[RMDB]
RNA sequence: GGGAACGACUCGAGUAGAGUCGAAAAUAUUGUGGGCCGGUACUAUUACUUUGAACAAAUAAGAGUGCUUAAAGCAGGCUUCAAAUGCCUGAUUAUUAUGUGCUUGGGAUAAUGAAAUAAGACCUCUUCGUUGUACUCUAUUCGUAGAGUACAACGAAAAAGAAACAACAACAACAAC
Reactivity to DMS in 0.01 (KOAc 150mM, MgCl2 10mM, bicine 150mM(pH8.5), 24C), signal-to-noise 1, nucleotides 027 to 126: u030a020u050u000g040u050g000g020g100c070c040g000g020u000a030c080u000a070u000u000a030c060u000u000u000g000a270a200c120a080a020a060u040a070a050g000a000g010u010g000c020u000u000a060a010a020g000c120a010g010g000c030u000u000c230a050a110a080u020g010c000c000u000g050a030u010u000a070u000u000a040u020g000u020g100c040u020u020g000g040g000a140u000a040a020u010g000a060a060a060u070a010a060g000a130c020c060u040c130u000
Reactivity to 2A3 in 0.01 (KOAc 150mM, MgCl2 10mM, bicine 150mM(pH8.5), 24C), signal-to-noise 3, nucleotides 027 to 126: u130a050u020u070g070u090g020g030g000c010c050g010g000u010a010c020u030a030u090u110a150c070u100u010u190g080a100a030c050a100a070a080u130a140a090g010a000g000u040g010c020u030u030a000a020a000g000c000a000g030g000c030u100u150c090a070a050a090u160g000c000c010u000g040a070u040u030a090u050u000a000u050g030u020g000c000u010u060g060g000g020a020u020a040a020u100g070a200a030a030u080a110a000g020a000c000c010u000c020u000